[RMDB]
This 207-nucleotide RNA was probed chemically with 2A3 and DMS. For DMS the reverse transcriptase was MarathonRT. The RNA was probed in 150 mM KOAc, 10 mM MgCl2 and 150 mM bicine (pH 8.5) at 24 C.
RNA sequence: GGGAACGACUCGAGUAGAGUCGAAAAUCAUUCUACGUGUACUGUUUUUGCCCGAAGACCCGGUGCCACAGGGGAAUAGGACAGAAUAACAACACCAAAGCACAGCCAAUGGGAACAACACGAUCCGCCGUUUUUCUUGUGGGGUACUUCCGCGACAGGAUAUAUGUGAUUUCGAUCACAUAUAUCCAAAAGAAACAACAACAACAAC
Reactivity to 2A3 in 0.01 (KOAc 150mM, MgCl2 10mM, bicine 150mM(pH8.5), 24C), signal-to-noise 3, nucleotides 027 to 156: u080c020a050u130u070c060u050a120c090g040u050g040u110a130c070u050g070u030u020u010u080u070g060c020c000c000g040a050a010g020a030c010c020c050g090g070u120g030c050c080a060c040a050g020g010g000g010a020a060u050a060g040g000a020c020a010g070a040a040u140a080a020c040a030a040c030a040c020c040a090a020a020g040c020a050c040a100g060c040c010a070a070u090g000g010g020a050a050c040a010a010c000a030c050g060a060u030c000c010g000c030c050g040u000u000u000u060u160c060u070u060g020u040g000g030g010g010u020a090c030u080u020c010c020g100c030g090a000c040a030
Reactivity to DMS in 0.01 (KOAc 150mM, MgCl2 10mM, bicine 150mM(pH8.5), 24C), signal-to-noise 1, nucleotides 027 to 156: u000c050a080u000u000c030u000a010c100g000u020g040u000a120c080u000g000u000u000u000u000u000g010c000c010c000g030a110a230g020a140c030c000c000g020g030u020g030c080c170a060c090a160g000g000g110g020a040a070u010a110g020g040a100c030a080g000a130a080u000a040a290c030a020a070c060a020c020c050a010a100a130g020c060a070c040a020g020c030c040a000a140u000g010g010g000a080a080c040a100a110c030a040c080g000a060u000c030c010g070c040c020g000u000u020u020u000u000c040u000u020g070u010g050g000g030g030u000a060c210u010u000c020c030g000c040g040a040c060a110